[RMDB]
RNA sequence: GGGAACGACUCGAGUAGAGUCGAAAACUCGGUAAACGGUGCUUUGAGCCGGUAGGUGAAGUGGUACCCUAUGGUACCGCCGAUGUUCACAUAGUGCGUGUCCUCAGGGGUGAGCACCUCUUCGGUCCGACAGCCGAAGAUUCGUCUUCGGCUGUCGAAAAGAAACAACAACAACAAC
Reactivity to 2A3 in 0.01 (KOAc 150mM, MgCl2 10mM, bicine 150mM(pH8.5), 24C), signal-to-noise 2, nucleotides 027 to 126: c010u000c040g040g100u100a100a070a000c070g030g010u050g000c000u160u160u170g050a030g050c000c010g050g090u120a070g000g090u040g000a050a020g030u000g040g000u050a060c030c000c040u110a110u300g000g000u000a000c000c000g020c000c030g020a030u020g120u160u100c020a020c020a130u170a070g140u160g150c060g030u110g040u000c000c000u060c090a090g120g000g020g000u100g020a010g000c030a000c060c030u070c000u020u040c000g050g060u070c030
Reactivity to DMS in 0.01 (KOAc 150mM, MgCl2 10mM, bicine 150mM(pH8.5), 24C), signal-to-noise 2, nucleotides 027 to 126: c020u000c020g020g000u000a060a100a110c140g000g010u000g010c040u000u000u000g020a250g020c020c000g010g030u000a060g000g010u010g000a140a060g040u010g000g000u000a020c020c030c300u010a120u010g040g010u000a010c030c030g030c040c040g000a110u010g010u000u010c110a010c040a080u000a080g010u000g020c020g030u000g000u000c010c000u000c220a160g010g000g000g010u020g000a070g000c070a000c000c020u010c070u000u010c050g000g030u000c080